[RMDB]
RNA sequence: GGGAACGACUCGAGUAGAGUCGAAAAGCUCCGUGCACGAGGUGGUCCUUGUCGGAGGCUCCACCCGUAUCCCCAAGAUCCAGGCAUUGAUCACUGAGUUCUUCAACGGCAAGGAGCCCUGCAAGUCAUAACAGUACUCUUUCGAGAGUACUGUUAUAAAAGAAACAACAACAACAAC
Reactivity to 2A3 in 0.01 (KOAc 150mM, MgCl2 10mM, bicine 150mM(pH8.5), 24C), signal-to-noise 5, nucleotides 027 to 126: g010c000u000c010c010g040u050g000c020a030c130g060a100g030g000u030g020g030u030c010c000u040u030g150u140c100g090g010a020g060g010c100u040c020c010a030c000c000c020g000u050a190u090c020c000c010c000a010a020g020a030u000c000c010a020g060g000c070a140u080u180g040a080u150c010a010c090u070g020a080g130u050u040c000u060u030c030a090a030c030g020g000c000a010a050g010g000a020g010c030c010c000u020g020c030a050a030g050u100c010
Reactivity to DMS in 0.01 (KOAc 150mM, MgCl2 10mM, bicine 150mM(pH8.5), 24C), signal-to-noise 7, nucleotides 027 to 126: g010c020u000c020c030g010u000g020c020a080c050g010a120g010g020u000g010g000u010c020c010u000u010g010u010c140g000g000a070g020g010c090u000c010c030a060c060c000c010g010u000a090u010c010c010c020c130a100a080g000a040u000c020c030a060g010g010c080a150u010u010g000a070u010c080a100c040u000g000a160g000u000u000c040u000u000c130a090a120c080g000g000c020a060a060g000g000a040g000c010c020c010u000g010c100a080a110g000u010c150